[RMDB]
RNA sequence: GGGAACGACUCGAGUAGAGUCGAAAAAUAAGGCGCAUUGCCGUGGCAUCUAACGUUCAUCACAUGACGCGGAAGUAUGGGGGCCUUCAAGGUACGUUCGCAGAGCAGCUAGAAGGAUUCGCUGAUUACGCAAAGGAAAUGGCCGAUCAGAUUUUCAAUCGUACUACCAGUUCGCUGGUAGUACGAUAAAAGAAACAACAACAACAAC
Reactivity to DMS in 0.01 (KOAc 150mM, MgCl2 10mM, bicine 150mM(pH8.5), 24C), signal-to-noise 1, nucleotides 027 to 156: a210u000a050a050g000g000c050g020c110a160u010u020g040c030c060g030u000g090g000c000a010u010c050u040a070a060c120g000u030u000c090a100u020c090a150c010a180u000g000a070c070g030c070g040g040a070a110g020u010a030u000g020g000g010g050g040c010c010u010u000c050a050a090g040g050u070a030c060g050u000u000c110g030c050a120g040a030g020c030a050g010c000u010a050g000a090a070g030g020a170u010u000c070g150c010u010g000a090u010u000a090c100g000c050a040a090a150g000g010a040a160a060u030g000g020c020c010g000a110u000c090a040g000a110u010u000u040u040c060a090
Reactivity to 2A3 in 0.01 (KOAc 150mM, MgCl2 10mM, bicine 150mM(pH8.5), 24C), signal-to-noise 2, nucleotides 027 to 156: a030u130a040a080g010g000c000g010c020a020u010u130g000c010c030g010u020g020g000c030a060u070c120u250a090a050c100g040u110u160c050a130u050c000a080c020a090u060g040a030c010g000c020g000g050a090a070g010u040a040u090g030g000g000g050g000c000c000u090u070c050a110a000g030g000u030a020c090g070u040u050c050g030c080a000g020a000g070c000a000g010c010u010a040g010a100a000g070g030a050u070u110c020g010c040u030g000a090u050u100a000c020g020c020a100a000a000g020g030a040a040a060u050g010g010c000c010g040a030u090c010a000g080a130u070u010u000u160c100a100

Structure probing data (DMS and 2A3) for a 207-nucleotide construct. Reactivities are given for positions 27 through 156. The reactions ran in a buffer of 150 mM KOAc, 10 mM MgCl2 and 150 mM bicine (pH 8.5), at 24 C. The DMS profile rests on 1,559 reads.